[RMDB]
This 207-nucleotide RNA was probed chemically with 2A3. The reactions ran in a buffer of 150 mM KOAc, 10 mM MgCl2 and 150 mM bicine (pH 8.5), at 24 C. For 2A3, 511 sequencing reads were counted.
RNA sequence: GGGAACGACUCGAGUAGAGUCGAAAACUGGUUUAUGAGGACCUGAAGUUUCUGUAUCCCCACAGACUGAUGAUCUCAUCAAAUUGUCCCAAGCUGCUAAGAUCAUGGAGCGGAUGGUCAACCAGAAUACAUAUGAUGACAUUGCUCAAGGUAAGAACCUAAUACCACGCUUCGGCGUGGUAUUAGGAAAAGAAACAACAACAACAAC
Reactivity to 2A3 in 0.01 (KOAc 150mM, MgCl2 10mM, bicine 150mM(pH8.5), 24C), signal-to-noise 2, nucleotides 027 to 156: c030u060g000g020u100u070u130a140u210g100a070g150g020a030c030c000u030g020a090a000g030u100u070u090c030u040g080u150a190u110c030c000c060c000a010c000a010g060a030c020u010g010a000u000g000a000u030c070u100c120a090u040c020a030a120a220u100u070g000u010c040c070c030a030a010g010c060u090g010c030u080a010a110g000a080u030c050a050u150g000g010a010g010c050g000g000a000u000g000g000u020c020a040a030c030c000a000g050a070a010u090a080c060a010u190a010u240g080a100u070g000a040c030a110u020u120g000c010u050c050a000a000g090g000u050a060a010g050a020a070